[RMDB]
RNA sequence: GGGAACGACUCGAGUAGAGUCGAAAAUUGCAUCCCGGGCUGCACUGUGUAUGCCCCUGAGGUCAUCCUGUCCAGUGUUGGAAUCAGCCUCUGCUGGGCAUCAGGUUGCCUGCACCUACUCCUUGUUUAUAUGUGGGUGUGUGUAUCUGUGGAUGUAAUAACGAGAGAUGUUCGCAUCUCUCGUUAUAAAAGAAACAACAACAACAAC
Reactivity to DMS in 0.01 (KOAc 150mM, MgCl2 10mM, bicine 150mM(pH8.5), 24C), signal-to-noise 1, nucleotides 027 to 156: u010u000g000c010a070u000c000c070c000g000g020g020c040u010g030c030a080c040u000g030u020g000u020a040u000g010c010c020c000c010u000g000a050g040g020u010c030a130u010c040c050u000g000u000c040c020a080g030u020g040u000u000g010g000a180a100u000c160a200g000c000c060u010c010u000g000c020u020g030g000g030c010a030u010c030a180g010g000u010u000g040c030c100u000g010c020a000c000c010u000a050c010u000c100c150u000u000g020u000u000u020a190u000a060u030g010u010g010g010g010u000g010u000g020u000g010u010a070u000c030u010g020u000g040g010a020u010g000u000a160
Reactivity to 2A3 in 0.01 (KOAc 150mM, MgCl2 10mM, bicine 150mM(pH8.5), 24C), signal-to-noise 2, nucleotides 027 to 156: u070u020g090c000a000u010c000c010c020g000g020g020c040u120g040c040a070c150u010g040u070g060u240a020u020g010c040c000c000c000u020g000a020g010g030u110c050a080u130c070c030u070g080u060c040c020a170g120u110g210u300u150g010g020a030a060u100c030a050g040c010c010u000c000u020g170c170u110g000g000g000c000a010u000c000a000g020g000u170u040g010c010c010u000g010c000a000c000c000u030a010c010u110c020c020u120u170g100u190u300u030a280u070a090u200g020u090g000g010g000u010g000u010g030u040g020u030a100u060c050u060g090u240g030g000a000u000g020u040a060

The record gives the reactivity of an RNA of 207 nucleotides to DMS and 2A3. For DMS, 5,050 sequencing reads were counted. The RNA was probed in 150 mM KOAc, 10 mM MgCl2 and 150 mM bicine (pH 8.5) at 24 C. For 2A3, 1,616 sequencing reads were counted. Values cover nucleotides 27 to 156.